[RMDB]
Structure probing data (2A3) for a 177-nucleotide construct.
RNA sequence: GGGAACGACUCGAGUAGAGUCGAAAAGAAUGCUCGUCCUCUCCUAAGAAAAAGAAUGGUGUGCGGAUGGUAAGAAAAAGAAUGGAGAGGACGAGCUAAGAAAAAGAAUCCAUCCGCACACCUAAGAGGGUUUUAUGUAGUUCGCUACAUAAAACCCAAAAGAAACAACAACAACAAC
Reactivity to 2A3 in 0.01 (KOAc 150mM, MgCl2 10mM, bicine 150mM(pH8.5), 24C), signal-to-noise 1, nucleotides 027 to 126: g070a030a070u180g000c040u000c000g000u000c000c000u000c000u060c000c010u120a140a030g110a050a160a010a000a000g230a100a050u290g000g000u050g000u000g000c000g010g000a000u000g030g000u110a030a000g280a130a120a060a000a000g300a050a090u210g000g000a000g000a000g000g000a000c000g010a040g000c000u040a000a000g000a030a040a050a000a000g090a030a000u010c000c000a000u000c000c040g000c000a000c000a000c000c010u000a000a000g120a120
As a SHAPE reagent, 2A3 marks flexible, mostly unpaired nucleotides at the ribose 2'-OH. The 2A3 profile rests on 1,437 reads. 2A3 adducts were read by reverse transcription with SuperScript II with manganese.